Structure probing data (DMS and 2A3) for a 177-nucleotide construct. It was measured as part of the RMDB library OK1LIB. The DMS profile rests on 4,319 reads. DMS adducts were read by reverse transcription with MarathonRT. Values cover nucleotides 27 to 126.

RNA sequence: GGGAACGACUCGAGUAGAGUCGAAAAUGAAGGAAACCCUUAUUACCCAAGUAGAUUUCAAGCAGGAGUGAUGAAAGGGGUUGGGCCAGCAGAACCAGGAGACUGCGGUGGGAUUUUGAGAUGCAUAAAUUGAAAUGGACUUCGGUCCAUUUCAAUUAAAAGAAACAACAACAACAAC
Reactivity to DMS in 0.01 (KOAc 150mM, MgCl2 10mM, bicine 150mM(pH8.5), 24C), signal-to-noise 3, nucleotides 027 to 126: u040g000a120a100g000g020a100a060a090c070c010c010u020u030a060u030u000a130c010c010c010a110a160g000u040a080g020a160u020u020u030c090a090a130g000c030a090g000g000a060g020u020g010a110u000g010a040a090a080g000g000g010g000u040u000g000g010g020c080c040a090g030c030a040g010a070a060c050c060a100g000g000a150g000a070c060u000g020c040g000g000u000g020g000g010a160u020u010u020u000g010a090g000a090u000g000c080a050u010a050
Reactivity to 2A3 in 0.01 (KOAc 150mM, MgCl2 10mM, bicine 150mM(pH8.5), 24C), signal-to-noise 2, nucleotides 027 to 126: u020g010a000a000g120g020a020a260a150c060c000c000u050u120a150u000u130a180c050c000c000a000a040g000u060a000g010a110u060u200u110c020a030a020g030c060a000g030g000a060g150u060g060a030u050g010a070a000a030g050g030g000g000u100u120g010g050g000c040c000a000g060c010a020g040a020a080c000c080a100g050g030a060g010a010c000u030g000c030g110g020u140g040g000g000a060u060u210u000u080g210a170g020a000u110g000c030a040u050a070